[RMDB]
Chemical mapping of a 207-nucleotide RNA with DMS and 2A3. Source: RMDB library OK3TST, as collected in RNAgym. DMS (dimethyl sulfate) methylates the pairing face of unpaired adenines and cytosines. The RNA was probed in 150 mM KOAc, 10 mM MgCl2 and 150 mM bicine (pH 8.5) at 24 C.

RNA sequence: GGGAACGACUCGAGUAGAGUCGAAAAAAAAUUUGCCGGAUUGAUGAUGAGCGGAAACAGCGUAAGGUGCGCAAGUGGCAUCACAAAAUCAAACUGGACGGCAAACUAUAGCGUAGUCCAAGAUAGAUUAGUUGGUAUGAGCGUUCCAAUUAUUGAGAUAUGCUUCCUUUUUCGAAAGGAAGCAUAUAAAAGAAACAACAACAACAAC
Reactivity to DMS in 0.01 (KOAc 150mM, MgCl2 10mM, bicine 150mM(pH8.5), 24C), signal-to-noise 2, nucleotides 027 to 156: a110a030a060a110u030u010u000g020c050c000g000g000a170u000u010g020a110u000g010a050u000g010a240g030c020g040g000a230a070a070c030a060g020c040g000u000a120a100g010g010u000g000c020g000c070a120a150g030u000g030g020c040a020u020c020a090c070a070a050a030a060u000c020a050a040a120c050u010g010g000a170c000g010g010c000a050a030a070c060u020a120u000a110g010c070g020u010a080g010u020c020c000a070a060g000a120u000a110g010a060u000u000a060g010u020u000g020g000u000a060u000g010a100g000c050g020u000u000c020c010a040a080u000u000a140u000u010g000a220g010
Reactivity to 2A3 in 0.01 (KOAc 150mM, MgCl2 10mM, bicine 150mM(pH8.5), 24C), signal-to-noise 2, nucleotides 027 to 156: a010a000a000a000u030u030u020g000c000c000g000g000a030u000u040g020a060u030g010a020u000g020a060g030c020g060g010a000a130a060c010a020g040c000g040u070a120a070g120g030u110g030c020g000c010a060a050g000u070g180g000c000a020u060c000a000c030a020a080a000a020u040c010a000a100a030c060u020g020g040a060c000g010g010c000a060a040a040c100u090a110u140a200g030c030g090u060a020g010u080c000c010a010a000g060a040u120a040g050a040u040u040a010g070u030u090g040g010u040a090u100g010a020g020c000g010u030u050c010c000a000a030u160u040a080u080u140g050a120g020